Annotation: This 207-nucleotide RNA was probed chemically with 2A3.
RNA sequence: GGGAACGACUCGAGUAGAGUCGAAAAUUGUGAGAGCGAGAUCGCUCCUUAAGAUGACUUUACACAACACGCUUAGUGGUGAUGUCGCAGAUGGAGAAGACAAACUCACCGCUGUCGUAGAACUGCUAGUUGAGCAGAGUAGUGAUGAUAGUGAGAGUCUCCAAAAGGGGUUCGCCCCUUUUGGAGAAAAAGAAACAACAACAACAAC
Reactivity to 2A3 in 0.01 (KOAc 150mM, MgCl2 10mM, bicine 150mM(pH8.5), 24C), signal-to-noise 1, nucleotides 027 to 156: u180u170g040u030g000a140g000a000g040c090g000a080g090a190u160c020g030c050u020c000c000u150u180a010a160g030a100u080g010a080c050u030u020u230a080c120a000c010a140a000c000a000c060g150c050u110u170a010g010u020g000g000u040g000a000u020g080u040c020g030c130a000g110a260u230g040g040a090g000a300a000g020a000c040a000a110a000c010u020c020a010c000c000g000c050u000g000u000c030g010u030a080g100a280a080c000u000g010c030u040a120g040u050u170g050a000g000c060a010g000a030g000u100a020g000u040g020a110u020g000a040u050a040g010u040g000a060g000a020g060